[RMDB]
RNA sequence: GGGAACGACUCGAGUAGAGUCGAAAAGUGAUCUUCAGAAGCUGGGCUUGAUUAUCCUUGCCAAACAAAAUGCUGAAACCAAAAAUCUGAAAGGUAUUUCUUGCUAAGUAAGGGAGAGCUGUGCUAAGAGCAUAGAUUCGUUCGCGGAUCUGUGCUCAAAAGAAACAACAACAACAAC
Reactivity to 2A3 in 0.01 (KOAc 150mM, MgCl2 10mM, bicine 150mM(pH8.5), 24C), signal-to-noise 9, nucleotides 027 to 126: g070u060g040a090u030c040u100u040c040a040g040a160a010g060c040u140g030g040g000c010u040u040g050a090u140u210a060u160c010c000u010u020g010c010c010a070a100a060c040a010a070a050a020u100g010c030u040g030a080a080a100c050c040a070a070a040a040a070u120c090u110g060a100a070a040g020g000u020a080u030u070u020c100u060u070g010c020u050a040a060g020u010a040a030g050g010g010a060g000a010g020c030u050g020u040g070c010u070a130a050
Reactivity to DMS in 0.01 (KOAc 150mM, MgCl2 10mM, bicine 150mM(pH8.5), 24C), signal-to-noise 9, nucleotides 027 to 126: g020u010g010a060u010c040u000u010c050a080g010a100a080g020c030u010g000g010g010c030u010u000g010a120u020u020a080u020c040c020u000u000g000c040c040a070a130a210c110a040a040a050a050u020g010c020u000g010a100a090a130c140c100a020a080a090a090a110u030c090u010g000a060a090a180g000g000u010a040u010u010u020c100u010u000g010c020u010a070a110g000u010a040a050g010g000g000a050g010a040g020c020u000g010u020g010c040u010a080a170